[RMDB]
RNA sequence: GGGAACGACUCGAGUAGAGUCGAAAACUAAAUCUCCAGGAACGGGGGUGAUGCCUCUUGGUUAUAGAAGGUUUUACUCCUAGAAAGGAAUAGCCGUGUCUGUGUAUGAAGCACUGACGUUUGCGGUCUAUCAUAAUGACUUCGGUCAUUAUGAUAGAAAAGAAACAACAACAACAAC
Reactivity to 2A3 in 0.01 (KOAc 150mM, MgCl2 10mM, bicine 150mM(pH8.5), 24C), signal-to-noise 4, nucleotides 027 to 126: c010u060a000a150a070u080c060u000c050c020a040g090g030a080a050c040g030g020g000g000g000u010g000a010u020g000c000c000u000c030u090u060g270g010u290u080a120u050a200g160a150a060g000g000u040u010u000u030a000c010u000c010c000u040a050g070a030a110a010g040g030a030a070u040a090g010c020c020g120u150g010u090c020u010g020u000g000u040a080u300g220a150a030g000c000a000c010u020g000a010c020g050u070u120u270g010c010g000g010u000
Reactivity to DMS in 0.01 (KOAc 150mM, MgCl2 10mM, bicine 150mM(pH8.5), 24C), signal-to-noise 3, nucleotides 027 to 126: c030u000a050a090a130u010c100u000c000c010a060g000g020a210a150c200g010g000g000g020g000u000g000a010u000g010c000c000u020c010u000u000g020g030u020u010a080u010a010g010a060a040g010g010u000u000u000u000a020c020u000c000c010u000a060g000a130a170a100g000g000a080a100u010a150g000c000c000g010u000g000u000c010u000g010u000g000u000a100u010g030a150a140g010c010a000c010u010g010a010c020g020u010u010u010g010c010g000g000u010
This 177-nucleotide RNA was probed chemically with 2A3 and DMS. For DMS the reverse transcriptase was MarathonRT. 2A3 adducts were read by reverse transcription with SuperScript II with manganese. Conditions: 150 mM KOAc, 10 mM MgCl2 and 150 mM bicine (pH 8.5), 24 C.